[RMDB]
RNA sequence: GGGAACGACUCGAGUAGAGUCGAAAAACGAAAACUACGCACUCGCAGCUUAAUAACCAGCGCUGAGCCCUUCUCCCCCAGCUUGCCUGUGUCCUAGGGAAUUGGAAGGUCAUCCUUCACAGGAUCGUCUAGGUAAUCCCUUUCGAGGGAUUACCAAACCACAAAAUAUAUUCGUAUAUUUUGUGGUAAAAGAAACAACAACAACAAC
Reactivity to DMS in 0.01 (KOAc 150mM, MgCl2 10mM, bicine 150mM(pH8.5), 24C), signal-to-noise 3, nucleotides 027 to 156: a080c060g010a100a050a060a100c010u000a050c040g000c020a090c070u000c020g020c050a110g030c020u000u010a060a110u010a130a110c060c020a080g050c070g010c040u010g010a100g000c010c020c020u010u000c040u010c030c010c000c030c030a140g020c020u000u000g020c010c020u000g010u010g010u010c020c020u000a080g010g050g020a070a130u010u010g010g000a100a060g020g020u000c070a100u010c000c010u000u010c100a090c090a070g020g010a040u000c010g030u000c040u010a070g030g020u000a000a020u000c000c000c000u000u000u020c300g000a060g010g000g000a020u010u000a000c000c000a000a050
Reactivity to 2A3 in 0.01 (KOAc 150mM, MgCl2 10mM, bicine 150mM(pH8.5), 24C), signal-to-noise 2, nucleotides 027 to 156: a000c040g000a040a020a050a050c100u200a030c050g060c090a000c000u030c030g030c030a040g010c010u090u070a140a080u110a260a170c060c000a030g020c030g010c130u110g030a060g000c000c000c060u110u000c050u100c060c010c010c000c020a010g020c020u040u090g030c000c000u040g010u010g020u070c000c010u020a000g000g000g080a020a010u100u080g080g030a070a030g040g020u080c000a060u040c010c000u020u030c030a040c020a040g000g010a010u060c020g050u010c160u050a070g000g010u000a000a000u000c010c000c000u010u010u020c030g050a010g000g000g000a000u000u000a000c000c000a000a000
Structure probing data (DMS and 2A3) for a 207-nucleotide construct. Reactivities are given for positions 27 through 156.